[RMDB]
RNA sequence: GGGAACGACUCGAGUAGAGUCGAAAAGCUCCAUUCGUUGGCGAUGUCGAUGAUAAUUUAUGCAUCAACUGUGCGUGGCAAUUUGGCAUCUUCGCAAUCCAAACCGAGUGGGUUGCUGCUGGCAGGCCGGCACGGACGGAUUCGUCCGUCCGUGCCGAAAAGAAACAACAACAACAAC
Reactivity to 2A3 in 0.01 (KOAc 150mM, MgCl2 10mM, bicine 150mM(pH8.5), 24C), signal-to-noise 2, nucleotides 027 to 126: g060c050u080c020c020a070u100u100c090g020u070u100g090g000c050g000a070u010g000u050c120g040a030u060g010a010u080a160a140u140u150u270a130u140g000c030a030u060c120a120a070c090u090g020u050g040c030g040u050g010g000c020a090a130u020u010u100g020g000c000a000u000c010u090u060c080g000c070a030a010u010c000c020a000a010a190c090c020g050a040g110u030g000g050g000u110u030g020c030u020g030c000u000g100g050c020a050g090g000c030
Reactivity to DMS in 0.01 (KOAc 150mM, MgCl2 10mM, bicine 150mM(pH8.5), 24C), signal-to-noise 1, nucleotides 027 to 126: g000c150u000c020c020a010u050u060c110g010u010u000g010g000c100g010a170u000g000u000c090g040a000u000g030a000u000a110a000u110u050u100a060u000g000c050a030u000c180a090a180c120u000g000u010g040c060g000u000g000g000c120a090a180u040u000u030g000g090c030a030u000c010u060u000c160g000c140a040a010u000c000c040a010a010a160c090c140g000a190g010u000g000g000g000u030u000g000c040u040g010c020u010g010g000c120a030g000g070c110
Structure probing data (2A3 and DMS) for a 177-nucleotide construct. For 2A3, 767 sequencing reads were counted. Values cover nucleotides 27 to 126. The RNA was probed in 150 mM KOAc, 10 mM MgCl2 and 150 mM bicine (pH 8.5) at 24 C. Source: RMDB library OK1LIB, as collected in RNAgym. The DMS profile rests on 1,007 reads.